[RMDB]
RNA sequence: GGGAACGACUCGAGUAGAGUCGAAAAUACUUUUGAGGAUGUAGAGAAACUUCGCAAAUUGUUGUACCGCGUGGAAUAAUAACAGUGUCCAAAGCGUGGAUAAACAGCUGAAGAGUUCGAAUAUAGCCUUGAAACAGGUUGUAGUCACAACUAUGCACACCGUUCACUUUUUCGAAAGUGAACGGUGAAAAGAAACAACAACAACAAC
Reactivity to 2A3 in 0.01 (KOAc 150mM, MgCl2 10mM, bicine 150mM(pH8.5), 24C), signal-to-noise 3, nucleotides 027 to 156: u060a010c020u010u030u020u060g010a000g030g050a020u100g010u070a020g000a010g000a070a080a000c020u030u010c030g010c090a050a160a250u110u090g000u000u000g050u080a060c000c000g010c030g020u110g050g090a070a000u110a190a000u050a150a110c050a080g250u050g100u240c030c010a110a040a000g000c000g000u010g000g000a020u140a040a080a000c030a000g000c030u090g010a040a010g040a070g110u050u010c000g080a100a000u040a000u010a010g020c010c010u000u000g040a080a000a000c030a060g100g000u010u010g030u080a110g040u120c080a010c030a230a080c040u140a110u220g000c100a010
Reactivity to DMS in 0.01 (KOAc 150mM, MgCl2 10mM, bicine 150mM(pH8.5), 24C), signal-to-noise 1, nucleotides 027 to 156: u000a090c030u060u020u000u000g010a030g020g020a040u000g010u000a040g000a300g000a100a010a110c000u010u000c030g020c120a140a100a120u000u000g000u000u000g000u000a250c040c010g010c010g100u000g000g020a060a070u010a140a060u000a090a140c140a150g040u000g050u020c020c020a050a080a270g000c070g010u000g020g010a120u000a100a020a020c030a030g000c070u000g010a070a070g010a110g020u000u000c030g000a120a160u000a010u020a040g010c030c000u030u000g000a060a070a140c120a050g050g000u000u000g010u000a060g000u020c040a040c030a020a240c010u000a080u000g000c000a160